[RMDB]
RNA sequence: GGGAACGACUCGAGUAGAGUCGAAAACAAAAGCGGGCGUGCGCCGGCCUGCGGCUCAUACGCGCCCGGCGAGUCGUACGCGUACGCGUGCCUGGGCUUCUCGCGGCGGCUGCGGUGCACCGUCGUCCUGCUGGAACUACUUCGGUAGUUCCAGCAGAAAAGAAACAACAACAACAAC
Reactivity to 2A3 in 0.01 (KOAc 150mM, MgCl2 10mM, bicine 150mM(pH8.5), 24C), signal-to-noise 1, nucleotides 027 to 126: c020a000a150a000a000g060c090g050g020g040c080g010u060g030c000g000c000c020g020g060c010c040u060g030c000g030g010c000u080c080a120u130a210c080g040c010g040c020c000c000g000g010c000g000a020g080u260c050g000u060a040c020g040c040g130u110a040c080g000c030g080u070g020c000c090u140g000g000g000c000u120u010c120u080c130g000c000g090g000c010g000g060c080u120g040c030g040g050u060g030c000a020c040c040g070u070c010g070u110c000
Reactivity to DMS in 0.01 (KOAc 150mM, MgCl2 10mM, bicine 150mM(pH8.5), 24C), signal-to-noise 2, nucleotides 027 to 126: c130a130a080a070a130g000c040g000g010g010c180g020u040g010c040g010c020c010g010g030c070c010u010g010c020g020g030c040u000c160a100u010a130c180g000c190g010c030c060c000g000g000c030g000a040g010u030c090g010u000a030c060g030c150g000u000a020c130g010c040g020u010g000c030c020u010g000g000g020c040u000u000c060u000c070g010c030g020g000c080g020g000c120u010g030c040g010g000u010g010c040a100c070c080g020u010c020g020u000c130